[RMDB]
RNA sequence: GGGAACGACUCGAGUAGAGUCGAAAACUCCUCCGCCUUUUUCCUUGCUGUGAUCCAUUUCUCGAGGGUCUCCUCCCUUGUUCCCCUUCGUCCUCUCCUCGUCUCGGAUUGGCUCAUUCUCAGGUCGUCAGCCUAUAGUUCGCUAUAGGCAAAAGAAACAACAACAACAAC
Reactivity to DMS in 0.01 (KOAc 150mM, MgCl2 10mM, bicine 150mM(pH8.5), 24C), signal-to-noise 9, nucleotides 027 to 129: c020u010c020c010u000c040c060g040c050c020u000u020u010u040u040c050c020u020u040g000c020u020g020u010g020a120u000c040c030a070u030u020u020c050u020c050g030a120g020g000g030u030c030u030c040c040u000c020c000c020u020u040g030u010u000c000c020c000c070u030u020c040g020u020c030c010u020c030u020c000c000u000c040g000u010c030u010c040g000g000a210u000u000g000g000c010u010c050a090u010u000c000u020c020a090g000g000u000c030g000u030c060a140
Reactivity to 2A3 in 0.01 (KOAc 150mM, MgCl2 10mM, bicine 150mM(pH8.5), 24C), signal-to-noise 9, nucleotides 027 to 129: c020u030c000c000u020c010c020g040c010c000u050u060u020u070u050c010c010u040u080g030c040u060g050u090g080a080u050c030c020a090u050u090u040c060u030c030g030a120g010g010g030u020c040u030c020c010u050c000c000c000u020u060g020u030u040c010c000c000c000u030u050c020g070u020c000c000u010c000u000c000c010u020c010g110u010c020u020c030g040g010a060u020u050g010g000c010u010c020a170u190u010c020u000c020a040g030g020u010c000g020u020c030a010